[RMDB]
RNA sequence: GGGAACGACUCGAGUAGAGUCGAAAAGAUAUGGAUGGCAUUACCAGCUUGGAUUUAUCGGAAACGAUUGUCAGCUGAAAUGUCCAUCCUAAGUCAAAACCAAGCUUAGCUUCGGCUAAGCUUGGAAGCUGUGUUUAUUCUUCGGAAUAAACACAGCAAAAGAAACAACAACAACAAC
Reactivity to DMS in 0.01 (KOAc 150mM, MgCl2 10mM, bicine 150mM(pH8.5), 24C), signal-to-noise 2, nucleotides 027 to 126: g000a030u010a300u000g000g000a030u000g000g000c000a010u000u000a070c200c000a010g010c000u010u010g040g000a020u000u000u000a000u000c000g000g000a160a100a170c010g000a000u000u000g000u000c010a020g000c000u000g000a050a040a000u000g010u010c000c000a010u000c000c000u000a010a090g010u000c050a060a110a110a240c010c000a000a000g010c000u000u010a010g010c000u000u010c240g050g000c000u000a010a010g020c000u000u010g000g000a020a070
Reactivity to 2A3 in 0.01 (KOAc 150mM, MgCl2 10mM, bicine 150mM(pH8.5), 24C), signal-to-noise 3, nucleotides 027 to 126: g040a020u060a030u150g000g010a000u010g000g010c000a000u000u040a190c090c020a040g020c030u100u230g130g020a110u300u300u210a020u060c000g040g000a100a040a040c000g020a000u000u040g000u020c000a000g000c020u000g010a010a010a010u000g000u000c000c020a000u000c000c000u000a040a030g020u000c000a060a060a050a060c000c000a000a000g000c000u010u010a000g000c000u020u120c300g030g000c000u000a000a000g000c000u000u000g000g000a000a010